[RMDB]
The record gives the reactivity of an RNA of 207 nucleotides to 2A3. It was measured as part of the RMDB library M2RFPK. Values cover nucleotides 27 to 156.

RNA sequence: GGGAACGACUCGAGUAGAGUCGAAAAAGCGAUGAUACGUCAUCGCAACGAUUGCCUGAUCGUAAAACUGGAGACGGCCGUGGCCGCGACCACGUAAAAAAGCGUAACGUGGUCUACGGACCACGAAAAAAGCGCGGAACGUUCGCGUUCCGCGCAACGUGUUAGUGAAGUUCGCUUCACUAACACGAAAAGAAACAACAACAACAAC
Reactivity to 2A3 in 0.01 (KOAc 150mM, MgCl2 10mM, bicine 150mM(pH8.5), 24C), signal-to-noise 2, nucleotides 027 to 156: a000g000c010g000a000u010g010a000u020a060c150g090u000c010a010u000c000g010c000a000a000c010g050a030u090u070g000c010c020u060g040a060u010c010g000u100a020a010a090a190c120u150g110g030a090g000a090c100g030g000c000c000g000u000g000g040c070c000g000c020g030a020c000c020a000c020g010u060a000a060a000a000a000a000g030c020g010u020a070a010c000g010u010g020g000u000c000u030a050c140g070g010a040c000c000a000c000g020a020a000a000a000a000a000g000c010g010c020g000g020a020a010c000g000u090u090c260g040c000g140u020u000c010c000g020c000g000c000a000a000
The reactions ran in a buffer of 150 mM KOAc, 10 mM MgCl2 and 150 mM bicine (pH 8.5), at 24 C. The 2A3 profile rests on 1,291 reads.